[RMDB]
RNA sequence: GGGAACGACUCGAGUAGAGUCGAAAAGAUAUGGAUAACUUUAGACAUGGCUGCUGGAUCCGAUGAAACUCUUCGGAAACGAAGAGUGGAGGAUCCCGCAGCCAACAGCUAAAGUUAUCCUAAGUCACGCUACAAUAUUCUUCGGAAUAUUGUAGCGAAAAGAAACAACAACAACAAC
Reactivity to DMS in 0.01 (KOAc 150mM, MgCl2 10mM, bicine 150mM(pH8.5), 24C), signal-to-noise 1, nucleotides 027 to 126: g000a060u000a300u000g000g000a010u000a000a010c010u010u000u010a000g000a040c060a210u020g030g020c020u000g000c000u000g000g010a030u000c000c000g010a140u020g000a160a300a020c000u000c000u000u010c000g040g000a120a080a190c000g000a030a010g030a040g000u000g000g020a020g000g000a020u000c020c000c030g000c000a000g000c000c000a000a030c250a140g010c000u000a010a010a010g000u000u000a000u000c000c000u010a040a090g010u000c040a260